[RMDB]
RNA sequence: GGGAACGACUCGAGUAGAGUCGAAAAGGGGCAACUCUUCUCAGAAUCCAGCGAGAGGCGUGGAGAGAGGGCCGCGGUGCUCUGGAGUAGAGGCUCUGCCUUCGAAACACCAUCGAUCGUCCCUUCUACCAUUAGUACACUUCGGUGUACUAAUGGUAAAAGAAACAACAACAACAAC
Reactivity to 2A3 in 0.01 (KOAc 150mM, MgCl2 10mM, bicine 150mM(pH8.5), 24C), signal-to-noise 1, nucleotides 027 to 126: g010g000g000g000c010a000a100c010u000c010u100u000c030u000c000a050g210a080a080u010c010c000a040g070c100g120a190g010a060g300g000c100g090u070g060g000a040g000a000g010a020g000g070g000c040c010g000c020g030g000u020g000c000u010c010u030g020g010a000g020u020a000g000a000g010g000c030u070c190u300g050c010c020u170u090c000g010a000a000a000c010a020c080c000a010u020c000g020a150u050c020g020u020c010c000c000u000u000c000u010
Reactivity to DMS in 0.01 (KOAc 150mM, MgCl2 10mM, bicine 150mM(pH8.5), 24C), signal-to-noise 2, nucleotides 027 to 126: g060g030g010g000c090a070a180c010u000c010u010u000c040u000c050a140g030a130a120u000c060c030a050g010c100g000a060g010a110g010g000c130g010u000g010g000a070g000a130g000a000g010g000g000c120c030g000c020g000g010u000g010c030u000c020u000g000g000a010g020u010a020g000a040g000g010c000u040c180u020g000c030c020u000u000c020g020a140a120a130c030a000c200c000a040u000c000g000a090u030c050g000u000c000c010c000u000u000c110u000